[RMDB]
RNA sequence: GGGAACGACUCGAGUAGAGUCGAAAAGCGUAGAGUUGGACACAGGUACCGUAUGCGACCGAGUGAGGUUAUCGGAAGCAGCCGCGUUCGAGCCCGUCUCCGAAGACGCUCGCGCUAUGGUCUUCGCGGACGUGCACGGGCGGCGCAUGUCUUUCGACACACAUUCCAAGUUCGCUUGGAAUGUGUGAAAAGAAACAACAACAACAAC
Reactivity to DMS in 0.01 (KOAc 150mM, MgCl2 10mM, bicine 150mM(pH8.5), 24C), signal-to-noise 1, nucleotides 027 to 156: g030c050g020u020a050g010a080g040u010u000g020g010a140c120a100c050a060g000g020u000a060c030c060g050u010a070u000g040c050g040a120c000c070g010a070g000u000g000a080g000g030u000u000a110u000c030g000g010a040a160g020c070a160g000c050c020g030c020g030u000u010c020g040a100g000c010c030c040g030u020c010u000c080c020g000a030a050g010a070c010g000c050u000c080g040c140g030c030u000a070u010g070g010u020c000u000u000c050g000c090g000g010a020c020g050u000g020c040a070c000g000g010g000c010g010g020c080g040c040a070u000g000u020c010u000u000u000c010g020a300
Reactivity to 2A3 in 0.01 (KOAc 150mM, MgCl2 10mM, bicine 150mM(pH8.5), 24C), signal-to-noise 4, nucleotides 027 to 156: g050c040g010u030a020g010a040g030u070u080g030g000a030c040a010c020a070g070g020u090a120c040c040g070u110a070u170g080c060g000a050c050c020g000a050g050u110g010a060g030g070u080u080a030u030c000g000g010a000a000g000c020a010g010c020c020g040c020g040u070u120c010g030a010g000c010c040c000g000u010c020u000c020c010g000a010a000g000a000c020g090c300u070c110g150c090g060c090u120a210u160g080g000u000c000u000u000c000g000c050g000g000a000c000g000u010g000c010a020c020g030g000g010c010g000g010c000g000c010a040u050g030u010c020u010u000u000c000g010a000
Source: RMDB library OK3TST, as collected in RNAgym. This 207-nucleotide RNA was probed chemically with DMS and 2A3. DMS (dimethyl sulfate) methylates the pairing face of unpaired adenines and cytosines. The DMS profile rests on 3,487 reads. The reactions ran in a buffer of 150 mM KOAc, 10 mM MgCl2 and 150 mM bicine (pH 8.5), at 24 C.